[RMDB]
RNA sequence: GGGAACGACUCGAGUAGAGUCGAAAAGUAUAUUUUCACCUAGUAUGUAAAGUAUGAGUGACGGUAUUCCGGGAACCGCCCCGGUGCGGAAAGGGUUUCUGGGGAGGAUACUCGACAUCAUCCUGGGGGACCUUAAAUAGUUCGCUAUUUAAGGUCCAAAAGAAACAACAACAACAAC
Reactivity to 2A3 in 0.01 (KOAc 150mM, MgCl2 10mM, bicine 150mM(pH8.5), 24C), signal-to-noise 2, nucleotides 027 to 126: g040u040a110u030a060u290u130u040u070c030a060c000c010u000a010g040u020a010u070g060u060a130a060a180g020u010a120u190g010a020g010u060g010a010c030g030g030u080a120u230u050c050c010g010g000g030a030a020c010c010g060c060c010c000c050g120g100u080g020c050g020g010a080a130a100g090g000g000u030u050u000c040u020g010g000g000g020a030g030g010a030u030a140c010u020c020g000a010c020a010u040c000a010u020c000c010u010g000g000g030
Reactivity to DMS in 0.01 (KOAc 150mM, MgCl2 10mM, bicine 150mM(pH8.5), 24C), signal-to-noise 3, nucleotides 027 to 126: g010u010a070u010a080u010u000u000u000c030a220c010c000u010a090g010u010a020u010g010u010a080a100a110g010u000a030u010g020a070g000u000g010a120c080g010g010u000a300u010u000c020c000g020g000g000a030a030c030c010g010c040c020c000c050g020g030u000g030c090g020g010a040a030a080g000g000g010u000u000u000c010u010g020g010g000g010a050g010g020a190u010a020c020u000c020g020a050c050a070u000c040a040u000c020c000u000g010g010g020